Structure probing data (DMS and 2A3) for a 177-nucleotide construct.
RNA sequence: GGGAACGACUCGAGUAGAGUCGAAAAGUGCGACAUUUCGAUGUCGCACAAACCCAAAUGGUGGCACCUAACUAAACAAGCCGGGAAAAGCCAGAUGCCAAGGUCCUUAGCCCUUCGGGGCUAAGAAUUGAAGUACAAUGUUCGCAUUGUACUUCAAAAAAGAAACAACAACAACAAC
Reactivity to DMS in 0.01 (KOAc 150mM, MgCl2 10mM, bicine 150mM(pH8.5), 24C), signal-to-noise 5, nucleotides 027 to 126: g010u000g010c000g010a010c010a010u000u000u020c140g020a020u000g010u000c000g020c010a010c010a000a080a100c000c000c000a080a110a100u010g010g020u000g010g000c060a080c020c030u000a100a070c070u000a050a080a150c120a080a080g010c060c040g000g000g010a050a080a130a120g000c010c040a060g010a060u000g000c020c020a070a110g020g000u000c060c010u000u000a000g010c000c000c000u000u010c160g030g000g010g000c000u000a000a000g000a080a080
Reactivity to 2A3 in 0.01 (KOAc 150mM, MgCl2 10mM, bicine 150mM(pH8.5), 24C), signal-to-noise 3, nucleotides 027 to 126: g000u000g000c000g010a000c010a000u080u080u100c200g100a010u010g010u000c000g040c010a000c000a000a000a010c000c010c010a050a080a020u120g010g000u020g030g000c030a190c130c010u060a090a060c040u090a160a100a130c060a110a000g010c030c090g030g000g010a050a130a020a000g020c000c030a030g030a120u120g030c040c030a040a050g050g030u060c020c000u000u000a010g020c000c000c000u020u060c210g040g010g000g000c000u000a000a000g000a000a020

Notes:
Conditions: 150 mM KOAc, 10 mM MgCl2 and 150 mM bicine (pH 8.5), 24 C. The data come from the RNA Mapping Database (RMDB), library M2PK50.